[RMDB]
RNA sequence: GGGAACGACUCGAGUAGAGUCGAAAAACGACAAGGGGCGAAGAUCCUCGGAAGGAAUUCUCCCAAGAAGCGAAGAGAACACAAGAAUCGGAAGUCUUCCCGAAGACGCCGGGGACAUCUCGGAAUGCAGCCAGCAUCUUCGGAUGCUGGAAAAGAAACAACAACAACAAC
Reactivity to 2A3 in 0.01 (KOAc 150mM, MgCl2 10mM, bicine 150mM(pH8.5), 24C), signal-to-noise 5, nucleotides 027 to 129: a010c030g030a020c040a050a040g010g000g030g000c050g050a040a020g020a110u070c010c010u010c000g030g020a010a000g010g000a010a010u120u010c020u010c030c000c000a050a050g080a040a000g050c060g020a040a000g020a000g020a050a000c040a000c010a070a020g030a040a030u080c040g020g020a030a020g020u000c000u010u020c010c000c030g030a050a010g070a020c040g000c020c020g010g000g010g030a030c020a080u030c020u020c000g000g020a020a020u080g030c020a020g080
Reactivity to DMS in 0.01 (KOAc 150mM, MgCl2 10mM, bicine 150mM(pH8.5), 24C), signal-to-noise 7, nucleotides 027 to 129: a020c110g010a060c130a100a080g030g050g010g040c140g040a050a030g010a070u040c030c020u030c080g010g020a040a020g010g030a060a110u040u030c080u020c000c000c060a000a130g000a080a040g000c030g040a100a080g030a070g000a000a070c030a130c040a070a000g030a060a090u030c050g000g000a030a020g000u030c000u020u060c040c080c040g000a100a070g000a050c220g040c070c000g010g010g000g000a080c080a030u020c020u030c040g010g030a070a030u040g000c100a040g000